[RMDB]
RNA sequence: GGGAACGACUCGAGUAGAGUCGAAAAGAUAUGGAAUGGUCCGAAAGAUGAACUACCAUCGGGGAGGAAUCGGAAACGAUUCCUCUCUCUAGCGUGUGGCAUCUAGUAGCUGACCAUUCCUAAGUCAGUAAUGCCUAUUGUUCGCAAUAGGCAUUACAAAAGAAACAACAACAACAAC
Reactivity to DMS in 0.01 (KOAc 150mM, MgCl2 10mM, bicine 150mM(pH8.5), 24C), signal-to-noise 3, nucleotides 027 to 126: g000a020u000a210u010g010g000a010a010u000g000g000u000c010c100g000a170a190a150g010a010u000g000a120a080c050u010a300c040c010a090u000c120g000g000g000g000a010g010g010a020a010u000c000g000g000a040a030a050c010g010a010u000u010c000c000u000c000u000c000u010c040u000a100g020c250g020u000g030u010g000g020c090a060u010c020u000a040g000u010a300g000c130u000g000a010c010c000a000u000u000c010c010u010a020a040g010u000c000a160
Reactivity to 2A3 in 0.01 (KOAc 150mM, MgCl2 10mM, bicine 150mM(pH8.5), 24C), signal-to-noise 2, nucleotides 027 to 126: g030a020u020a010u070g000g020a000a020u010g010g000u000c020c040g050a100a020a050g020a000u050g040a150a230c150u170a120c300c010a030u060c050g000g000g030g000a000g010g000a000a010u000c000g010g010a050a000a030c010g000a000u000u000c000c000u000c000u010c000u000c000u030a080g030c130g130u300g100u070g300g160c020a020u010c020u010a030g070u100a010g020c040u020g000a010c000c000a000u000u020c000c010u000a000a000g030u010c060a010
The record gives the reactivity of an RNA of 177 nucleotides to DMS and 2A3. It was measured as part of the RMDB library TTRINS. 2A3 is a SHAPE reagent: it acylates the 2'-hydroxyl of flexible nucleotides of all four kinds. For 2A3 the reverse transcriptase was SuperScript II with manganese.